[RMDB]
RNA sequence: GGGAACGACUCGAGUAGAGUCGAAAAAUUCAAUCUAGCUAUGUUUCCCGCAUAUACAUGACUAUCAGGUCCAUGAGCUAUCAGCUGGCCUAUUGUUAAGCCAUCAUUAUGGAAAUCUGCUAAUAUACGAUAUGCUUCUGUUCGCAGAAGCAUAUCGAAAAGAAACAACAACAACAAC
Reactivity to 2A3 in 0.01 (KOAc 150mM, MgCl2 10mM, bicine 150mM(pH8.5), 24C), signal-to-noise 6, nucleotides 027 to 126: a000u170u110c060a010a070u070c010u070a030g050c050u050a040u080g030u000u020u020c000c010c010g020c020a010u110a000u020a060c130a080u160g070a060c010u040a070u200c040a040g020g010u030c040c000a070u120g050a010g050c010u050a060u240c080a030g030c010u020g030g000c000c010u060a100u080u100g120u090u090a060a010g030c000c010a090u090c050a060u080u170a020u050g030g030a040a070a140u050c050u060g000c010u060a110a090u100a110u020a160
Reactivity to DMS in 0.01 (KOAc 150mM, MgCl2 10mM, bicine 150mM(pH8.5), 24C), signal-to-noise 2, nucleotides 027 to 126: a100u030u000c090a090a060u050c120u000a060g000c030u020a040u000g000u020u000u000c000c020c000g000c160a030u010a010u030a080c210a000u000g000a110c090u000a070u040c070a010g000g010u040c020c060a010u040g000a060g000c130u030a090u000c170a100g000c020u000g000g000c030c070u020a120u020u000g000u030u040a070a110g010c000c000a000u000c090a100u010u020a090u000g000g000a020a000a070u000c110u060g010c140u010a060a090u040a110u040a280